[RMDB]
RNA sequence: GGGAACGACUCGAGUAGAGUCGAAAACGCCAGCGAUUCGUCGCUGGCGAAAUAAAUUCAGCGGUUUAAAUUUCGUCCGCAUAACCCCUGAUGCGGACGAAAAAAGGCAGUUGUUCGCAACUGCCAAUCAUCGUAAGAGAUUCGUCUCUUACGAUGAAAAAGAAACAACAACAACAAC
Reactivity to 2A3 in 0.01 (KOAc 150mM, MgCl2 10mM, bicine 150mM(pH8.5), 24C), signal-to-noise 2, nucleotides 027 to 126: c000g030c010c020a000g030c000g010a040u050u060c140g010u020c000g120c000u020g010g010c000g000a000a000a010u020a020a030a030u150u090c050a030g060c040g110g110u030u190u190a060a190a110u080u130u010c000g000u000c000c000g020c020a020u030a110a130c010c010c000c030u010g020a000u000g000c000g000g000a000c000g000a000a000a000a000a000a000g010g000c000a000g000u000u020g030u070u110c180g010c070a000a000c000u010g010c000c000a000a000
Reactivity to DMS in 0.01 (KOAc 150mM, MgCl2 10mM, bicine 150mM(pH8.5), 24C), signal-to-noise 2, nucleotides 027 to 126: c020g010c010c000a020g020c020g020a040u000u010c120g040u000c000g010c000u010g010g030c000g000a010a030a040u010a040a070a100u000u010c060a050g010c090g010g000u010u000u010a060a120a120u000u000u000c010g010u000c000c000g000c010a010u010a100a130c100c010c000c020u010g010a020u000g020c000g020g000a010c000g000a000a010a020a050a080a090g010g020c010a000g020u000u000g010u010u010c180g000c010a010a000c000u000g000c000c010a010a020